[RMDB]
RNA sequence: GGGAACGACUCGAGUAGAGUCGAAAAUCCGACUCUCAUAGGCUCUCCAACCCAACUCCUACUCACUACGUCCUCGUCGUACAGAACGGUAACAUGUUUUCCGAACAUCCGCGCUUGGGUAUACGAGAAAGGCGUAGAUUAUUCGUAAUCUACGCAAGCACAGUCCAAUAUUCGUAUUGGACUGUGCAAAAGAAACAACAACAACAAC
Reactivity to DMS in 0.01 (KOAc 150mM, MgCl2 10mM, bicine 150mM(pH8.5), 24C), signal-to-noise 1, nucleotides 027 to 156: u000c040c020g010a070c010u000c000u000c010a170u000a090g000g040c020u000c010u010c040c070a010a090c080c010c000a070a100c000u000c030c000u010a100c020u000c060a060c040u010a070c040g000u000c030c010u000c060g000u000c110g030u000a100c020a150g000a120a160c020g010g000u010a090a160c080a110u000g000u000u000u000u000c040c090g000a100a110c040a020u000c000c050g000c040g000c050u050u030g010g030g000u000a150u000a030c040g010a110g000a100a060a100g010g020c000g040u000a010g000a000u020u000a050u000u000c260g030u000a050a000u000c000u000a000c020g030c020a000a040
Reactivity to 2A3 in 0.01 (KOAc 150mM, MgCl2 10mM, bicine 150mM(pH8.5), 24C), signal-to-noise 3, nucleotides 027 to 156: u010c020c000g030a010c010u010c000u000c030a080u040a100g040g020c020u020c000u010c060c000a050a050c010c000c000a010a030c040u060c030c000u050a050c020u050c040a070c010u050a030c010g050u030c010c020u020c000g010u000c020g000u030a040c020a090g050a110a010c000g030g000u080a080a050c050a130u090g010u050u010u100u070c040c010g020a050a010c020a060u020c000c010g020c010g020c070u060u060g040g000g020u090a080u000a130c040g000a010g000a110a040a010g130g000c000g000u000a000g000a000u000u000a020u020u040c120g020u030a000a000u000c010u000a000c000g010c000a010a000